[RMDB]
RNA sequence: GGGAACGACUCGAGUAGAGUCGAAAAGCAGUAUCUCGUUAGGCGAGGCUCCUAUACAAACACAGGUUGCUGAUCUGACGACGUCGAGAGACGCCCAAGAUUAGGACAGGAUAGAUCGAACCAAGGUGAACCUGUCCAGGGUUCGCCCUGGACAGAACCCAAGAAGUGGGUUCGCCCACUUCUUGGGAAAAGAAACAACAACAACAAC
Reactivity to 2A3 in 0.01 (KOAc 150mM, MgCl2 10mM, bicine 150mM(pH8.5), 24C), signal-to-noise 1, nucleotides 027 to 156: g000c000a030g040u030a080u070c050u050c050g020u010u280a080g000g190c020g040a050g000g060c040u030c000c000u130a140u080a150c240a010a220a000c050a000c040a100g030g100u070u110g050c020u050g000a060u000c000u040g030a000c050g060a050c000g060u000c020g030a040g010a010g010a170c010g040c010c000c000a000a020g020a010u020u070a030g010g060a010c000a030g010g060a100u030a100g020a040u060c030g030a010a080c040c020a020a030g050g000u100g020a050a060c000c000u000g010u010c000c000a010g020g000g000u030u110c130g080c020c000c000u000g000g000a000c000a000g000a000a000